[RMDB]
RNA sequence: GGGAACGACUCGAGUAGAGUCGAAAAGAUAUGGAUCGGUCCAUCAGCAUCGAUCUAGGCUCGGAAACGAGCCUAGGGAGCUGUGGACACGAUCCUAAGUCAAAAUCCCGACGUUCGCGUCGGGAAACCUCUCAUGAAUGUUCGCAUUCAUGAGAGGAAAAGAAACAACAACAACAAC
Reactivity to DMS in 0.01 (KOAc 150mM, MgCl2 10mM, bicine 150mM(pH8.5), 24C), signal-to-noise 2, nucleotides 027 to 126: g000a030u020a300u000g000g000a000u000c010g040g020u000c000c000a040u010c140a020g040c000a300u000c260g010a040u010c020u000a000g010g040c000u020c020g000g000a050a130a170c010g020a070g000c000c010u000a000g000g000g000a010g030c000u000g060u000g000g000a010c020a060c010g000a040u000c000c000u000a000a160g000u010c050a180a090a160a220u000c010c000c000g010a030c020g070u000u010c190g050c000g030u000c000g000g000g020a000a040a050
Reactivity to 2A3 in 0.01 (KOAc 150mM, MgCl2 10mM, bicine 150mM(pH8.5), 24C), signal-to-noise 2, nucleotides 027 to 126: g000a010u060a020u120g020g000a000u000c010g040g040u000c030c010a160u300c130a190g000c010a080u300c070g040a010u000c010u010a010g010g000c000u000c020g030g000a000a040a020c010g000a010g010c000c000u000a010g000g000g000a010g000c010u050g020u030g060g000a020c010a020c020g020a000u000c000c000u010a010a000g010u030c040a070a020a020a300u050c040c020c000g000a000c000g020u080u190c300g000c000g150u000c000g000g000g000a040a000a010